[RMDB]
RNA sequence: GGGAACGACUCGAGUAGAGUCGAAAAUGACAGAAGUUAGCUCCGCGAGGUGCGAACGUAAGCGACUCCCCACCACUCGCCUUAUUGCUUAGCAUGGGAUGUCCCAGCCAAGAACCGUCUAACUGGCGUCCCCAUCUGGGUUCGCCCAGAUGGGGACAAAAGAAACAACAACAACAAC
Reactivity to 2A3 in 0.01 (KOAc 150mM, MgCl2 10mM, bicine 150mM(pH8.5), 24C), signal-to-noise 1, nucleotides 027 to 126: u230g140a000c050a000g190a240a060g040u060u130a040g000c000u000c000c050g000c170g000a050g000g170u030g000c100g040a140a050c050g060u070a050a000g120c000g130a070c050u010c000c000c000c000a000c000c000a020c000u000c010g060c000c000u110u070a160u060u050g000c010u090u160a000g010c000a100u060g000g000g170a030u030g090u000c000c070c000a040g010c070c000a090a000g010a090a000c030c010g060u100c040u100a060a040c000u050g130g000c080